RNA sequence: GGGAACGACUCGAGUAGAGUCGAAAACCGGCUGGGCAACGAUCCGAGGGGACUAUCCCUCUCGAGAAUCGGCAAAUGGGCCCCUCGCUCGUAUCUCCGAGAGGAGACGAGAAGGAGGCGGAUCUCCCCUUAUCCCUCUGUUCGCAGAGGGAUAAGGAAAAGAAACAACAACAACAAC
Reactivity to 2A3 in 0.01 (KOAc 150mM, MgCl2 10mM, bicine 150mM(pH8.5), 24C), signal-to-noise 2, nucleotides 027 to 126: c000c020g070g000c090u100g050g030g000c060a130a080c050g010a000u000c000c000g010a000g000g010g010g000a040c110u110a140u300c050c010c000u000c000u020c000g230a270g040a060a050u010c010g010g000c040a000a040a120u120g000g000g060c020c020c000c010u010c010g040c000u010c010g030u070a180u030c000u000c000c020g040a030g010a040g090g000a000g020a010c000g000a010g010a020a110g110g010a000g000g020c110g050g040a060u030c030u030c020c020
Reactivity to DMS in 0.01 (KOAc 150mM, MgCl2 10mM, bicine 150mM(pH8.5), 24C), signal-to-noise 2, nucleotides 027 to 126: c000c020g020g050c110u000g000g000g010c060a080a070c050g010a020u020c030c000g010a010g020g000g010g010a170c200u000a120u000c140c000c000u010c000u050c010g010a070g000a090a050u010c010g020g030c140a040a100a100u020g000g020g010c010c000c010c010u010c010g000c000u000c020g010u000a110u000c000u010c000c000g000a270g000a280g010g000a030g010a010c040g000a010g010a050a050g000g000a060g000g000c200g010g010a090u010c040u000c090c120
Conditions: 150 mM KOAc, 10 mM MgCl2 and 150 mM bicine (pH 8.5), 24 C. Structure probing data (2A3 and DMS) for a 177-nucleotide construct. In probing experiments dimethyl sulfate is read out at A N1 and C N3, which are open when not base-paired. For 2A3, 1,366 sequencing reads were counted.